[RMDB]
Chemical mapping of a 177-nucleotide RNA with DMS and 2A3.
RNA sequence: GGGAACGACUCGAGUAGAGUCGAAAAGAAAGGCAGCCAUUGCAGCCCACGUAGCCAGUCGAUGCAUGCUUUUGCAUGCCGCCCACGACUGAGGGCAGCUGCGGCACUGAGGGCAGCUGCCGAAAGAACUAUAGUCGUGGUUCGCCACGACUAUAGUAAAAGAAACAACAACAACAAC
Reactivity to DMS in 0.01 (KOAc 150mM, MgCl2 10mM, bicine 150mM(pH8.5), 24C), signal-to-noise 5, nucleotides 027 to 126: g000a090a140a130g020g020c020a040g010c040c140a170u010u010g010c130a130g000c030c010c020a110c130g000u000a070g000c040c010a020g020u000c020g000a110u020g000c000a000u000g010c000u000u010u000u020g000c000a000u010g000c020c250g000c090c040c090a260c040g010a030c020u000g010a140g020g010g020c060a100g010c000u000g000c020g000g020c140a110c160u020g000a100g010g000g000c010a070g000c000u000g010c000c000g000a020a060a100g010a100
Reactivity to 2A3 in 0.01 (KOAc 150mM, MgCl2 10mM, bicine 150mM(pH8.5), 24C), signal-to-noise 4, nucleotides 027 to 126: g070a030a100a010g040g020c020a020g000c020c070a160u140u220g060c050a040g010c030c010c010a020c020g050u040a020g070c030c010a020g030u050c030g070a040u180g000c010a000u010g000c000u180u240u230u300g000c010a020u010g000c030c020g010c000c030c000a070c030g080a020c040u060g040a150g020g090g000c010a010g000c010u010g010c020g000g040c060a100c190u190g060a180g000g070g000c020a000g000c010u000g020c000c000g000a000a000a000g020a020

The reactions ran in a buffer of 150 mM KOAc, 10 mM MgCl2 and 150 mM bicine (pH 8.5), at 24 C. For 2A3 the reverse transcriptase was SuperScript II with manganese.